[RMDB]
RNA sequence: GGGAACGACUCGAGUAGAGUCGAAAAGAUAUGGACACUUCAGUUGCACUCCCGACGAAGUGCAGUAGUAUUCGGAAACGAAUACUACUGCACAGAGGGAGUGAACUACAACGAAGUGUCCUAAGUCCUAAAUUAUGGAGUUCGCUCCAUAAUUUAGAAAAGAAACAACAACAACAAC
Reactivity to DMS in 0.01 (KOAc 150mM, MgCl2 10mM, bicine 150mM(pH8.5), 24C), signal-to-noise 4, nucleotides 027 to 126: g010a090u000a220u010g010g000a020c000a000c000u000u000c010a150g040u010u000g010c000a020c000u000c000c000c000g000a210c300g000a120a120g000u000g000c000a010g000u010a000g010u000a000u000u000c000g020g000a100a110a230c000g000a010a010u000a000c000u000a000c000u000g000c000a000c000a010g000a220g010g010g000a020g000u000g000a020a030c110u000a300c020a010a010c020g000a020a010g030u010g010u000c000c000u000a010a060g010u000c010
Reactivity to 2A3 in 0.01 (KOAc 150mM, MgCl2 10mM, bicine 150mM(pH8.5), 24C), signal-to-noise 2, nucleotides 027 to 126: g030a030u130a050u240g000g000a020c000a000c010u050u000c090a170g020u000u050g030c030a000c010u010c000c020c010g150a220c060g290a300a090g000u010g000c010a010g000u000a010g000u010a010u000u000c000g010g000a040a080a040c000g010a010a000u000a000c000u010a010c000u000g010c000a000c010a010g000a000g000g000g030a000g000u000g000a000a000c010u060a020c010a050a000c010g000a010a000g000u000g000u000c000c010u000a010a000g000u000c010

Structure probing data (DMS and 2A3) for a 177-nucleotide construct.
Conditions: 150 mM KOAc, 10 mM MgCl2 and 150 mM bicine (pH 8.5), 24 C.
In probing experiments dimethyl sulfate is read out at A N1 and C N3, which are open when not base-paired.
It was measured as part of the RMDB library TTRINS.
For DMS, 6,245 sequencing reads were counted.
2A3 adducts were read by reverse transcription with SuperScript II with manganese.